This 177-nucleotide RNA was probed chemically with 2A3 and DMS.
The reactions ran in a buffer of 150 mM KOAc, 10 mM MgCl2 and 150 mM bicine (pH 8.5), at 24 C.
The DMS profile rests on 3,009 reads.
RNA sequence: GGGAACGACUCGAGUAGAGUCGAAAAGAUAUGGAUGCAUGUAGCUAGCUUAGUAGUCGGAAACGACUACGAGCUUGGACCUACACGUGCAUCCUAAGUCAAAACCCGUCGUCUUCGGACGACGGGACUUUGUAAAGCUCUUCGGAGCUUUACAAAGAAAAGAAACAACAACAACAAC
Reactivity to 2A3 in 0.01 (KOAc 150mM, MgCl2 10mM, bicine 150mM(pH8.5), 24C), signal-to-noise 1, nucleotides 027 to 126: g030a000u080a040u210g010g000a000u000g000c030a020u060g000u010a010g010c070u000a020g020c000u070u010a190g000u000a010g020u010c010g040g030a080a020a040c030g000a000c000u020a000c000g000a000g000c000u010u170g050g050a110c050c020u040a030c110a020c210g030u030g000c000a000u010c000c000u000a090a010g020u010c030a010a040a110a290c010c000c030g000u000c000g000u000c000u050u080c290g170g000a030c000g000a010c000g000g000g000a020
Reactivity to DMS in 0.01 (KOAc 150mM, MgCl2 10mM, bicine 150mM(pH8.5), 24C), signal-to-noise 3, nucleotides 027 to 126: g000a050u000a300u010g000g000a030u000g020c000a050u000g010u010a030g020c070u000a040g010c000u000u010a090g020u000a010g010u000c010g020g010a070a070a230c000g030a020c000u000a010c010g000a010g020c010u000u000g040g010a110c300c040u000a060c040a020c140g030u000g000c010a010u000c000c010u000a000a090g000u030c020a130a070a090a150c000c000c010g020u000c000g030u000c000u000u010c270g010g010a030c000g010a000c000g020g010g000a020
Reactivities are given for positions 27 through 126. It was measured as part of the RMDB library TTRDES. The 2A3 profile rests on 3,470 reads. DMS adducts were read by reverse transcription with MarathonRT.